[RMDB]
Annotation
The data come from the RNA Mapping Database (RMDB), library OK1LIB. The record gives the reactivity of an RNA of 177 nucleotides to DMS and 2A3. Values cover nucleotides 27 to 126. The reactions ran in a buffer of 150 mM KOAc, 10 mM MgCl2 and 150 mM bicine (pH 8.5), at 24 C. Values are in units of 0.01, from 0 to 300, in steps of 10. For 2A3, 3,601 sequencing reads were counted. For DMS the reverse transcriptase was MarathonRT. 2A3 adducts were read by reverse transcription with SuperScript II with manganese.
RNA sequence: GGGAACGACUCGAGUAGAGUCGAAAAGAAUUGGUAUGUAAGCUACCCCUUCCGGUAGCUGCGUCACACUUUAAGAGUGUGCAUACUGAGCCGAAGCUCAGCUUCGGUCCCCCAAGGGAAGGACAAAACUAGCCAUCGAUUUCGAUCGAUGGCUAGUAAAAGAAACAACAACAACAAC
Reactivity to DMS in 0.01 (KOAc 150mM, MgCl2 10mM, bicine 150mM(pH8.5), 24C), signal-to-noise 2, nucleotides 027 to 126: g060a020a120u000u000g000g000u000a000u000g000u000a300a190g000c000u000a000c000c010c050c000u000u000c000c000g000g000u000a000g000c000u000g010c010g020u030c000a000c000a020c000u000u000u060a150a070g000a040g060u030g010u010g000c000a000u000a000c030u000g010a030g020c010c000g040a010a000g040c010u060c170a120g010c020u020u000c000g030g000u040c110c000c000c120c110a120a090g010g020g000a010a000g000g010a300c220a020a080a100
Reactivity to 2A3 in 0.01 (KOAc 150mM, MgCl2 10mM, bicine 150mM(pH8.5), 24C), signal-to-noise 4, nucleotides 027 to 126: g110a020a090u010u010g000g000u000a010u000g000u010a010a000g000c000u010a000c040c050c000c030u000u000c010c000g010g000u000a000g000c000u000g000c000g000u000c010a000c000a010c000u070u100u300a300a120g250a000g250u000g000u010g010c000a000u000a010c000u000g000a000g000c000c000g000a000a000g010c030u090c300a060g000c000u020u000c000g000g000u010c000c000c000c000c000a040a070g120g000g000a000a000g000g000a000c060a020a100a000